[RMDB]
RNA sequence: GGGAACGACUCGAGUAGAGUCGAAAAAGAAGCUUACAAGAUUGUAUACAACUGGCAAUUCUGUCACUCCUUGGAUUUCUGGUCUCGUGUACUAUCGUUUGCUUGUCAACCAGAAAAGGAAAAUGGCCAGGCGUAAUAGGUUCGCCUAUUACGCCUGAAAAGAAACAACAACAACAAC
Reactivity to 2A3 in 0.01 (KOAc 150mM, MgCl2 10mM, bicine 150mM(pH8.5), 24C), signal-to-noise 5, nucleotides 027 to 126: a000g190a010a000g010c020u030u040a040c040a100a140g010a090u030u020g020u030a040u010a030c040a060a010c020u010g020g000c000a020a040u040u040c020u050g180u140c060a080c160u180c040c030u070u090g050g000a060u030u020u020c010u020g000g030u020c070u040c180g010u020g010u000a010c020u030a030u040c030g020u000u070u050g010c010u050u050g100u140c010a050a050c030c020a030g140a060a110a020a030g130g060a010a080a030a110u110g070g000c030
Reactivity to DMS in 0.01 (KOAc 150mM, MgCl2 10mM, bicine 150mM(pH8.5), 24C), signal-to-noise 3, nucleotides 027 to 126: a100g000a020a020g030c000u020u000a020c060a170a090g020a070u010u000g000u010a060u020a070c060a120a060c020u000g000g000c050a040a050u020u000c030u000g000u010c110a100c110u020c100c060u000u010g020g000a050u000u020u010c020u000g010g000u000c100u020c130g000u000g000u010a000c050u000a030u020c060g000u040u000u000g000c000u000u010g020u020c100a050a190c030c010a120g000a020a070a050a060g020g000a070a080a030a080u020g010g000c150